The data come from the RNA Mapping Database (RMDB), library M2RFPK.
The record gives the reactivity of an RNA of 207 nucleotides to 2A3 and DMS.
Reactivities are given for positions 27 through 156.

RNA sequence: GGGAACGACUCGAGUAGAGUCGAAAAACGGUCGUACGCGACCGAGGCGCGGCUAGGUCGACGGACCGAACAAUGGCAUCCCGCAUUCUGUCAUCCGCCGCGCAGCUUCUUCUCAAACGGUGCGGAAAAAAGUAGGACACCUUCGGGUGUCCUACAACGUGUACAUGAAGUUCGCUUCAUGUACACGAAAAGAAACAACAACAACAAC
Reactivity to 2A3 in 0.01 (KOAc 150mM, MgCl2 10mM, bicine 150mM(pH8.5), 24C), signal-to-noise 3, nucleotides 027 to 156: a010c010g000g000u000c010g020u060a040c250g010c030g130a000c000c000g000a040g000g000c000g000c000g020g000c000u010a010g010g000u010c030g100a180c260g200g060a000c010c000g000a010a000c020a010a020u010g000g000c000a010u110c040c020c000g000c000a030u280u180c010u030g000u000c000a010u010c010c010g000c000c000g000c010g010c000a010g000c000u160u120c010u070u000c020u010c040a110a140a040c080g020g000u010g000c010g000g000a040a080a000a030a020a000g000u000a000g000g000a000c000a000c000c010u040u090c200g010g010g000u000g000u000c000c000u000a000c000a000a000
Reactivity to DMS in 0.01 (KOAc 150mM, MgCl2 10mM, bicine 150mM(pH8.5), 24C), signal-to-noise 1, nucleotides 027 to 156: a150c020g010g030u000c010g000u000a060c140g000c050g030a030c020c020g000a050g010g000c030g000c000g020g000c070u000a150g010g010u020c000g040a190c300g000g000a030c030c000g000a110a060c260a110a080u000g010g000c010a140u030c060c020c000g040c030a040u000u010c060u010g060u000c040a010u000c050c090g030c020c000g030c040g070c000a000g000c080u000u010c070u010u000c010u000c010a180a110a080c040g010g020u000g020c020g000g000a000a060a000a110a140a160g020u000a030g000g000a030c010a000c000c010u000u000c300g000g000g020u000g010u010c000c000u000a000c000a010a030